[RMDB]
RNA sequence: GGGAACGACUCGAGUAGAGUCGAAAAAGGCUGGAUUUGGCCUGUAGUUUGCUGGUCCUUGUUUCAGACAUUCCUGUCAUGAUCCCCUAUUUGUCACAAGAGACUGUCAUAUGCUUAGCUAAAAUCCAGAUGACUUGGCCGGGCGUGGUGGCUCACAACUAUACUUGGACUUCGGUCCAAGUAUAGUAAAAGAAACAACAACAACAAC
Reactivity to DMS in 0.01 (KOAc 150mM, MgCl2 10mM, bicine 150mM(pH8.5), 24C), signal-to-noise 2, nucleotides 027 to 156: a070g000g030c000u000g000g010a100u000u000u000g030g020c030c020u000g020u000a030g010u000u000u010g000c020u000g020g010u010c040c040u000u000g000u000u000u000c030a080g010a040c040a070u010u000c050c020u000g010u000c080a140u000g010a210u000c020c020c010c110u000a120u000u000u000g020u000c040a070c030a070a150g010a190g020a050c020u000g000u000c020a050u010a070u000g010c040u010u000a070g000c030u000a050a030a060a070u000c010c020a100g020a100u000g020a070c030u010u000g010g020c010c040g000g010g040c030g060u000g010g040u010g020g000c020u010c030a050c100a110
Reactivity to 2A3 in 0.01 (KOAc 150mM, MgCl2 10mM, bicine 150mM(pH8.5), 24C), signal-to-noise 3, nucleotides 027 to 156: a000g170g000c010u020g000g020a030u000u030u050g040g000c000c020u000g010u000a200g020u000u100u120g030c080u050g000g000u010c000c000u050u010g040u030u060u080c040a040g000a050c020a040u090u110c090c100u100g100u110c140a260u290g170a270u190c000c010c000c010u070a080u170u120u120g030u040c020a010c000a060a010g090a000g000a080c030u020g020u060c020a030u030a030u110g040c000u040u110a040g000c000u070a150a000a000a120u010c010c000a010g000a050u040g020a040c000u070u030g030g020c040c020g030g010g010c020g010u040g000g000u020g000g040c000u020c000a040c020a020

The record gives the reactivity of an RNA of 207 nucleotides to DMS and 2A3. For 2A3 the reverse transcriptase was SuperScript II with manganese. For DMS, 7,100 sequencing reads were counted. The RNA was probed in 150 mM KOAc, 10 mM MgCl2 and 150 mM bicine (pH 8.5) at 24 C.